[RMDB]
RNA sequence: GGGAACGACUCGAGUAGAGUCGAAAAACAUCAUGGGUAGUAGAUUCUGGGAGUCACGGUCUCUACUAUCUAUGAUGAGCACUACAUGUAGACUAGACUGUGAUUCCCAGAGUCUACAUGUGGUGUAGUAUCUGUAUGUAUUCGUACAUGCAGAUACAAAAGAAACAACAACAACAAC
Reactivity to 2A3 in 0.01 (KOAc 150mM, MgCl2 10mM, bicine 150mM(pH8.5), 24C), signal-to-noise 1, nucleotides 027 to 126: a000c000a010u000c000a010u010g000g020g040u050a050g000u000a000g000a020u030u000c000u020g090g040g170a180g170u150c110a110c230g000g000u000c000u000c020u030a060c000u020a010u000c010u000a010u010g000a000u010g000a000g010c010a000c010u030a000c000a030u010g000u000a000g010a020c030u020a020g020a010c010u030g150u130g180a300u170u170c050c000c000a020g000a000g000u000c000u000a000c000a000u010g000u000g030g010u000g010u020a040